[RMDB]
RNA sequence: GGGAACGACUCGAGUAGAGUCGAAAAGGGCAUCCGUCGCCGACCACAAUCGCGGCGACCACUCGCUGACCGAGUCGGUCGUCGGCAAGUCCAAAAACCGCGCAGUCACGCACCGCAGGGUGGGUGCCCCUAUCAAGCAUUUCGAUGCUUGAUAGGGAAAAGAAACAACAACAACAAC
Reactivity to DMS in 0.01 (KOAc 150mM, MgCl2 10mM, bicine 150mM(pH8.5), 24C), signal-to-noise 3, nucleotides 027 to 126: g000g000g010c030a080u000c060c040g010u000c030g000c060c030g000a090c030c090a060c190a080a130u020c080g000c000g000g000c010g010a020c050c040a040c040u000c000g000c110u000g010a100c290c020g000a030g000u010c130g060g000u000c000g020u000c020g000g000c050a050a090g010u000c010c050a030a050a040a070a110c020c050g000c100g000c060a040g010u000c020a070c080g000c020a060c020c010g020c180a060g000g000g010u010g000g000g010u000g000c080
Reactivity to 2A3 in 0.01 (KOAc 150mM, MgCl2 10mM, bicine 150mM(pH8.5), 24C), signal-to-noise 3, nucleotides 027 to 126: g020g010g000c030a040u040c060c040g050u020c010g030c020c000g020a040c000c020a070c090a060a100u130c050g020c010g050g010c000g000a010c000c010a040c020u020c000g050c110u090g060a100c070c070g000a010g020u040c130g050g000u010c020g000u000c010g000g000c010a020a030g030u000c010c010a050a020a000a070a070c030c020g030c030g020c080a020g030u130c020a000c050g100c040a010c010c010g030c050a090g000g060g040u030g000g110g010u020g010c020